Annotation: This 177-nucleotide RNA was probed chemically with DMS and 2A3. Reactivities are given for positions 27 through 126. It was measured as part of the RMDB library OK2TRN.
RNA sequence: GGGAACGACUCGAGUAGAGUCGAAAAUGAAAUGAUCAACAUUUUGAAAAAUUACAAGUAGAAAAUGGUGAGUCACAGCUCUUGGCUCUGUUCACCUGAGCAGCUUACUCUGAGUUGUGGGUAUUGAACAUUGUCUAUUGUUCGCAAUAGACAAUGUAAAAGAAACAACAACAACAAC
Reactivity to DMS in 0.01 (KOAc 150mM, MgCl2 10mM, bicine 150mM(pH8.5), 24C), signal-to-noise 7, nucleotides 027 to 126: u020g000a100a080a100u010g020a150u000c060a050a080c010a010u000u000u000u010g000a050a080a110a110a100u010u010a110c170a080a110g020u000a100g000a030a020a030a030u000g000g000u010g000a070g000u000c020a030c060a030g000c020u000c060u000u000g010g010c130u010c050u000g010u010u000c040a120c230c170u010g000a030g010c020a040g010c300u000u000a090c030u000c040u000g010a040g010u000u000g020u000g000g000g010u010a090u000u010g010a130
Reactivity to 2A3 in 0.01 (KOAc 150mM, MgCl2 10mM, bicine 150mM(pH8.5), 24C), signal-to-noise 2, nucleotides 027 to 126: u150g010a070a030a050u090g040a070u100c000a000a140c010a020u050u040u060u090g110a110a040a010a060a030u240u200a090c030a130a020g040u040a030g210a060a060a030a030u050g020g020u060g020a010g070u090c010a010c010a020g000c010u010c000u120u120g050g000c030u020c020u040g010u040u080c110a190c140c060u060g010a010g030c000a010g020c020u040u090a040c030u050c050u050g060a040g000u030u020g010u050g000g030g020u100a110u100u150g040a000